[RMDB]
RNA sequence: GGGAACGACUCGAGUAGAGUCGAAAAUGUUGCAGCAUUAUGUGCCUGUAAAGCGCGCCGUGAGUGCCUGACGCCAUAUGCCCUGGCCCCAAAUGCCGUGAUUCCAACUUCGCUGGCACUUUUGUGCGCUGUUCCUCAGAUUCGUCUGAGGAACAGCAAAAGAAACAACAACAACAAC
Reactivity to DMS in 0.01 (KOAc 150mM, MgCl2 10mM, bicine 150mM(pH8.5), 24C), signal-to-noise 1, nucleotides 027 to 126: u010g020u000u010g010c080a040g010c020a040u020u010a060u010g050u000g000c020c030u000g030u010a070a060a070g000c070g030c040g000c030c130g000u010g000a060g010u000g000c070c020u000g040a130c150g040c110c050a030u000a080u010g030c030c000c040u000g010g000c030c020c010c050a010a100a090u000g010c010c040g020u000g020a090u000u000c080c110a070a110c180u000u010c070g000c100u020g000g000c010a010c110u000u000u000u000g030u010g000c110

Notes:
Chemical mapping of a 177-nucleotide RNA with DMS. The reactions ran in a buffer of 150 mM KOAc, 10 mM MgCl2 and 150 mM bicine (pH 8.5), at 24 C. In probing experiments dimethyl sulfate is read out at A N1 and C N3, which are open when not base-paired. It was measured as part of the RMDB library OK2TST. Reactivities are given for positions 27 through 126.